[RMDB]
RNA sequence: GGGAACGACUCGAGUAGAGUCGAAAACAUGUAGCUAGUGGUGAUGCUAUCAUGACUAGAUGUCUUGCUAUACAUGAUUGUUUUGUCAAACGUGUUGACUGGUCAAUUGUGUACCCUUUUAUUGACAACGAAGAAAAGAUCAAUAAAGCUGGUCGCACCCAGCUGGUCUAUUCGUAGACCAGCUGGGAAAAGAAACAACAACAACAAC
Reactivity to 2A3 in 0.01 (KOAc 150mM, MgCl2 10mM, bicine 150mM(pH8.5), 24C), signal-to-noise 2, nucleotides 027 to 156: c010a000u050g060u040a040g030c080u010a010g010u060g160g040u040g030a070u100g140c050u140a040u050c020a040u020g160a020c030u050a020g060a170u100g130u000c030u050u040g050c020u050a010u000a180c020a030u020g040a110u030u010g000u000u080u060u100g030u000c010a050a110a100c150g050u140g020u120u070g040a020c020u050g080g050u120c010a040a050u010u040g020u010g000u110a060c000c000c000u020u050u030u010a000u010u020g010a010c040a070a010c210g150a050a200g040a050a150a040a020g060a170u040c000a000a020u020a070a020a010g030c180u050g070g050u000c020g000c000a020